[RMDB]
RNA sequence: GGGAACGACUCGAGUAGAGUCGAAAAUCGCGCCGCAGGUGCGUCAGGGCUUCUGGCUGGCCGGCUUUGUCUCGGUGCUGAUCAUGGUCGUGCUGUGGAACGCCGGAUACAUCAUCAGCUCCAUGCAUAAUCAGUACGUGUUCGCACGUACUGAUUAAAAAGAAACAACAACAACAAC
Reactivity to DMS in 0.01 (KOAc 150mM, MgCl2 10mM, bicine 150mM(pH8.5), 24C), signal-to-noise 4, nucleotides 027 to 126: u010c050g010c070g000c000c000g030c080a060g010g040u010g000c040g030u010c090a090g000g000g010c030u000u000c050u010g010g000c060u000g000g010c030c040g010g020c070u020u010u010g010u020c030u010c070g000g030u010g000c000u000g000a020u000c140a060u000g010g010u010c020g010u020g000c020u000g000u030g020g010a080a100c220g010c010c030g010g010a030u030a070c050a020u010c260a040u000c030a030g010c010u000c010c040a080u030g000c190a150
Reactivity to 2A3 in 0.01 (KOAc 150mM, MgCl2 10mM, bicine 150mM(pH8.5), 24C), signal-to-noise 7, nucleotides 027 to 126: u080c010g000c020g020c040c000g130c070a070g000g070u050g030c020g050u040c030a030g010g060g020c000u050u010c020u070g060g010c020u030g050g000c010c010g030g000c020u080u060u080g090u040c030u010c070g010g010u040g000c050u060g000a020u030c020a050u050g070g000u020c020g080u150g080c030u060g020u170g150g050a110a050c070g010c020c010g020g010a030u050a090c020a030u020c000a000u000c010a010g000c000u000c010c020a060u080g000c010a080